[RMDB]
RNA sequence: GGGAACGACUCGAGUAGAGUCGAAAAGAUAUGGAAGUUACCAGCGAAGGCGGCAUGUCGGAAACGACAUGGCCGUGUUGACGCUGAUAACUUCCUAAGUCAAAACUUAGACACUUCGGUGUCUAAGGUAUUACGUUUCCUUCGGGAAACGUAAUACAAAAGAAACAACAACAACAAC
Reactivity to DMS in 0.01 (KOAc 150mM, MgCl2 10mM, bicine 150mM(pH8.5), 24C), signal-to-noise 5, nucleotides 027 to 126: g000a030u000a200u020g000g000a000a010g000u000u000a000c010c000a010g030c000g020a280a150g020g020c000g000g030c000a020u000g000u000c000g010g000a050a030a090c000g010a010c000a000u010g010g020c000c000g030u000g010u010u000g020a240c120g010c000u000g000a010u000a000a000c010u000u000c000c000u000a010a050g010u000c040a120a070a080a300c010u000u000a000g000a010c000a000c010u000u010c230g020g010u000g010u000c000u000a010a000g000
Reactivity to 2A3 in 0.01 (KOAc 150mM, MgCl2 10mM, bicine 150mM(pH8.5), 24C), signal-to-noise 5, nucleotides 027 to 126: g000a000u010a010u070g000g000a000a000g010u010u010a010c000c010a020g010c130g180a300a140g300g000c010g000g010c020a010u000g000u000c000g010g000a020a020a010c020g000a000c000a000u040g190g020c020c000g010u000g010u060u180g080a070c110g000c000u000g000a010u000a000a000c000u000u000c000c000u000a010a010g010u010c020a010a020a090a150c000u000u010a000g000a000c000a000c030u080u100c300g140g000u000g000u000c000u000a000a000g010

Source: RMDB library TTRDES, as collected in RNAgym. Chemical mapping of a 177-nucleotide RNA with DMS and 2A3. The reactions ran in a buffer of 150 mM KOAc, 10 mM MgCl2 and 150 mM bicine (pH 8.5), at 24 C. For 2A3 the reverse transcriptase was SuperScript II with manganese.